[RMDB]
RNA sequence: GGGAACGACUCGAGUAGAGUCGAAAAGAUAUGGAGGACUGCAUGAGCGAAGAACUCGGAAACGAGGGAGCUCGAAUGUUCCUCCUAAGUCAAAAUCGUGAUGAGAGGUUCGCCUCUCAUCACGAAACCUACCACAAUGCUUCGGCAUUGUGGUAGGAAAAGAAACAACAACAACAAC
Reactivity to 2A3 in 0.01 (KOAc 150mM, MgCl2 10mM, bicine 150mM(pH8.5), 24C), signal-to-noise 2, nucleotides 027 to 126: g020a020u080a050u110g000g000a020g050g030a040c130u130g030c110a140u260g020a000g020c040g080a300a020g030a060a080c000u000c000g040g050a010a050a030c020g030a010g000g020g030a010g000c040u000c000g010a090a000u060g060u140u070c000c000u020c000c000u010a060a010g070u090c010a000a010a030a280u030c010g000u020g000a020u000g000a010g000a000g000g100u090u270c300g050c060c000u000c010u030c000a000u010c000a000c010g010a000a000a000
Reactivity to DMS in 0.01 (KOAc 150mM, MgCl2 10mM, bicine 150mM(pH8.5), 24C), signal-to-noise 2, nucleotides 027 to 126: g000a080u010a300u020g020g020a030g010g010a090c090u010g000c300a110u020g000a000g020c000g020a130a170g030a130a240c010u010c000g000g000a110a150a270c000g000a010g010g030g000a090g020c000u000c000g010a080a050u000g030u010u010c000c000u000c000c020u000a000a010g000u000c030a060a060a130a110u020c000g020u000g000a020u000g000a000g000a010g000g040u000u000c300g000c020c000u000c000u000c010a000u000c010a000c000g020a000a030a050